[RMDB]
RNA sequence: GGGAACGACUCGAGUAGAGUCGAAAAGUCACUCAAUUCGUUGAGUGACAUACUGGGCCCGGAGUCGCGCAUGAUAGGGUCAAGACGCGCUCGAUAAAAUAACUAGUUGCCAGUUCGCUGGCAACAAGAGAAACAAGAAGUUCGCUUCUUGUUUCUCAAAAGAAACAACAACAACAAC
Reactivity to DMS in 0.01 (KOAc 150mM, MgCl2 10mM, bicine 150mM(pH8.5), 24C), signal-to-noise 3, nucleotides 027 to 126: g000u000c000a000c000u000c000a000a030u000u010c180g020u000u000g020a010g020u000g000a000c010a010u000a040c110u000g010g010g000c010c020c020g010g000a060g010u000c030g040c070g020c090a190u010g010a070u000a110g020g000g020u000c050a100a080g020a240c030g010c050g010c030u000c030g000a100u000a070a060a060a120u010a070a130c090u000a120g010u010u000g010c000c000a010g020u000u010c180g040c000u000g000g000c000a000a000c000a040a070
Reactivity to 2A3 in 0.01 (KOAc 150mM, MgCl2 10mM, bicine 150mM(pH8.5), 24C), signal-to-noise 4, nucleotides 027 to 126: g010u010c000a010c000u000c000a010a050u090u070c170g050u070u020g000a000g000u000g000a000c000a000u040a000c000u050g030g040g060c000c030c000g040g020a030g040u200c050g000c000g010c060a050u130g070a070u140a200g230g040g060u040c030a020a030g080a080c000g010c000g010c010u010c020g080a130u130a150a150a040a040u140a090a020c070u070a080g010u000u000g000c000c010a010g000u030u020c220g040c060u010g010g000c000a000a000c000a000a000
Chemical mapping of a 177-nucleotide RNA with DMS and 2A3. For 2A3 the reverse transcriptase was SuperScript II with manganese. For DMS, 3,216 sequencing reads were counted. The reactions ran in a buffer of 150 mM KOAc, 10 mM MgCl2 and 150 mM bicine (pH 8.5), at 24 C. The 2A3 profile rests on 7,235 reads.